[RMDB]
RNA sequence: GGGAACGACUCGAGUAGAGUCGAAAAACACCCAGUGUGCUGUAAUUGCUGUUGUUGCUGCUGUUCUUAAUAGCUUGUGCAUCUGCUUUGUUACCUCUAUACCAUUGUGUAUAGUACCUUACACUGCCUAGAGAUGAUACUUCGGUAUCAUCUCUAGAAAAGAAACAACAACAACAAC
Reactivity to DMS in 0.01 (KOAc 150mM, MgCl2 10mM, bicine 150mM(pH8.5), 24C), signal-to-noise 2, nucleotides 027 to 126: a100c210a130c020c010c010a130g010u010g030u010g030c020u010g020u000a060a090u010u000g010c040u010g020u010u000g030u010u000g010c000u000g000c000u010g010u010u000c030u000u010a090a110u010a080g000c040u010u000g010u010g010c040a060u000c030u000g020c020u000u010u000g010u000u000a100c140c050u020c010u000a010u000a020c010c010a240u000u000g040u010g030u000a000u000a020g010u000a040c130c060u000u000a050c110a050c090u000g010c200
The record gives the reactivity of an RNA of 177 nucleotides to DMS. DMS (dimethyl sulfate) methylates the pairing face of unpaired adenines and cytosines. The RNA was probed in 150 mM KOAc, 10 mM MgCl2 and 150 mM bicine (pH 8.5) at 24 C.